[RMDB]
RNA sequence: GGGAACGACUCGAGUAGAGUCGAAAAGAAGAUAAGAUACAAGACACCGUGGGCAGAUGACAAGAAAGUCCGUCGGUGUCGGUAAGGUCGUCAGUCACAGGCGACCGUUUUCUGUGACUGUAAAGAAAAUGGAUUUACGGUUCGCCGUAAAUCCAUUAAAAGAAACAACAACAACAAC
Reactivity to 2A3 in 0.01 (KOAc 150mM, MgCl2 10mM, bicine 150mM(pH8.5), 24C), signal-to-noise 2, nucleotides 027 to 126: g150a040a000g010a020u050a040a050g050a030u060a080c050a000a110g000a000c000a000c000c000g000u000g030g000g000c000a010g040a290u150g030a100c010a080a030g080a110a040a000g020u000c030c000g030u010c050g000g000u000g000u000c000g000g010u010a030a000g030g000u020c020g010u010c000a010g000u010c050a020c010a030g020g040c060g040a070c010c010g000u090u000u020u000c000u030g010u000g040a030c050u010g050u150a110a150a000g170a060a150
Reactivity to DMS in 0.01 (KOAc 150mM, MgCl2 10mM, bicine 150mM(pH8.5), 24C), signal-to-noise 4, nucleotides 027 to 126: g000a040a040g010a060u030a060a110g010a170u020a010c030a060a200g000a010c000a010c000c000g050u010g010g000g000c000a080g020a110u030g010a190c300a120a090g010a130a190a100g000u020c000c000g000u030c000g010g040u000g020u000c000g000g000u020a030a070g030g000u010c010g020u030c000a030g000u020c180a050c120a030g000g020c100g000a090c100c100g010u000u000u000u000c010u000g000u000g000a130c030u000g000u020a070a050a130g000a040a050